Chemical mapping of a 177-nucleotide RNA with DMS and 2A3. 2A3 adducts were read by reverse transcription with SuperScript II with manganese. DMS adducts were read by reverse transcription with MarathonRT.
RNA sequence: GGGAACGACUCGAGUAGAGUCGAAAACGGCAGUUGCAUCGCCAUUUAGGCCACGGUAUCUGUGGGCGACGAAUAAGCGUCGUCGCAGAUACGCUAGCUCCCUAGGUCGUCUAGCGUGAUGCUAUGCUCUACUCAUGGGCUUCGGUCCAUGGGUAGAAAAAGAAACAACAACAACAAC
Reactivity to DMS in 0.01 (KOAc 150mM, MgCl2 10mM, bicine 150mM(pH8.5), 24C), signal-to-noise 9, nucleotides 027 to 126: c130g000g010c010a040g000u020u020g010c030a020u010c020g010c020c050a140u010u030u010a070g000g010c020c070a130c140g010g010u000a000u000c000u000g010u000g030g030g010c000g000a010c000g010a240a140u050a130a180g010c000g020u000c000g020u000c010g000c000a010g000a010u000a000c000g000c040u000a060g000c100u010c020c020c010u000a060g010g020u010c100g000u000c030u010a030g010c120g020u000g000a030u010g010c010u010a070u010g010c060
Reactivity to 2A3 in 0.01 (KOAc 150mM, MgCl2 10mM, bicine 150mM(pH8.5), 24C), signal-to-noise 9, nucleotides 027 to 126: c030g040g000c020a080g080u180u120g030c000a010u010c000g000c010c010a040u140u110u100a040g010g000c020c020a120c090g030g000u000a000u010c000u010g010u060g210g040g030c000g000a000c000g040a080a180u240a300a070g210c010g010u000c000g000u000c000g000c000a000g000a000u000a000c000g000c000u010a010g020c000u060c020c010c010u040a050g000g050u050c020g010u010c050u030a040g020c030g110u040g020a010u020g000c000u010a050u060g010c000

It was measured as part of the RMDB library OK1LIB. Values cover nucleotides 27 to 126. For DMS, 65,323 sequencing reads were counted.